[RMDB]
RNA sequence: GGGAACGACUCGAGUAGAGUCGAAAAGAGCACCUCUGAGUGCUCUCUUCUGUACUUGAUGGCAGGGAAGGGAGGACUCAGCAGGAAAAGAUUUCUGAGAAAAGCAAAGCUAUGCUUAUGAAUCAAAAUCAUAUCUGCAAUGCAGGCACAUAACAGAAUUGUCCAACAAAUUCGUUUGUUGGACAAUAAAAGAAACAACAACAACAAC
Reactivity to DMS in 0.01 (KOAc 150mM, MgCl2 10mM, bicine 150mM(pH8.5), 24C), signal-to-noise 1, nucleotides 027 to 156: g000a110g070c040a110c000c050u000c050u000g010a080g060u000g000c020u000c000u000c010u000u000c000u000g030u020a050c030u000u040g030a230u020g030g080c050a140g000g000g020a050a020g000g010g000a030g030g000a040c000u000c010a040g000c010a050g000g030a160a030a200a220g000a130u010u000u000c040u000g020a180g000a130a130a100a100g030c010a010a120a150g060c110u000a130u000g020c030u010u000a050u010g000a060a050u010c200a090a060a150a200u000c020a030u000a090u010c080u000g020c040a090a210u000g040c000a090g000g000c120a050c040a090u000a100a050c050a150g000a080
Reactivity to 2A3 in 0.01 (KOAc 150mM, MgCl2 10mM, bicine 150mM(pH8.5), 24C), signal-to-noise 2, nucleotides 027 to 156: g050a030g000c040a030c010c010u000c010u020g000a000g000u060g060c000u000c000u000c000u010u000c000u050g110u090a230c030u060u220g190a110u150g180g020c050a040g000g000g130a000a000g020g000g000a010g000g020a000c000u000c000a010g000c060a000g030g000a010a070a010a020g030a000u070u150u040c060u110g010a020g060a080a120a000a010g000c020a060a020a060g020c040u110a090u120g010c000u020u030a040u090g050a060a020u080c100a030a060a020a040u020c010a030u020a030u060c030u060g000c020a020a080u070g010c020a010g060g070c030a030c050a060u280a270a060c110a100g100a070